Notes:
Chemical mapping of a 177-nucleotide RNA with 2A3 and DMS. DMS adducts were read by reverse transcription with MarathonRT. The 2A3 profile rests on 561 reads. Values cover nucleotides 27 to 126.
[RMDB]
RNA sequence: GGGAACGACUCGAGUAGAGUCGAAAAGACUCUAGUACGAGAGGACCGAGUUGGACGUACCUCUAGUGUAUCAGUUGUGCCGCUAGGUGCAUUGCUGAGUAGCUACGUGCGGUCGAGAUAAGCGCUGGUAGUCGUUGUUGUUCGCAACAACGACUACAAAAGAAACAACAACAACAAC
Reactivity to 2A3 in 0.01 (KOAc 150mM, MgCl2 10mM, bicine 150mM(pH8.5), 24C), signal-to-noise 1, nucleotides 027 to 126: g000a010c010u000c000u000a060g150u200a030c010g000a060g030a000g000g010a000c000c000g000a060g130u030u050g020g020a000c000g030u000a000c000c000u000c000u010a000g000u000g250u300a000u010c000a000g000u000u000g000u000g000c040c000g110c210u030a080g010g020u130g000c040a000u000u050g000c000u010g020a010g010u050a000g000c000u020a010c010g010u030g000c000g000g090u010c000g000a000g000a140u170a180a000g000c040g010c080u070g000
Reactivity to DMS in 0.01 (KOAc 150mM, MgCl2 10mM, bicine 150mM(pH8.5), 24C), signal-to-noise 2, nucleotides 027 to 126: g000a000c000u000c000u000a060g000u000a120c000g010a000g010a300g000g040a300c010c000g030a140g000u000u000g020g000a090c010g000u000a010c020c010u020c010u020a010g030u000g000u000a300u040c000a000g020u020u000g000u000g000c000c000g000c300u050a060g000g030u000g050c070a010u030u000g030c040u000g000a000g000u010a300g000c040u000a000c230g000u000g000c000g020g000u030c030g000a090g000a100u000a120a080g010c080g070c020u000g060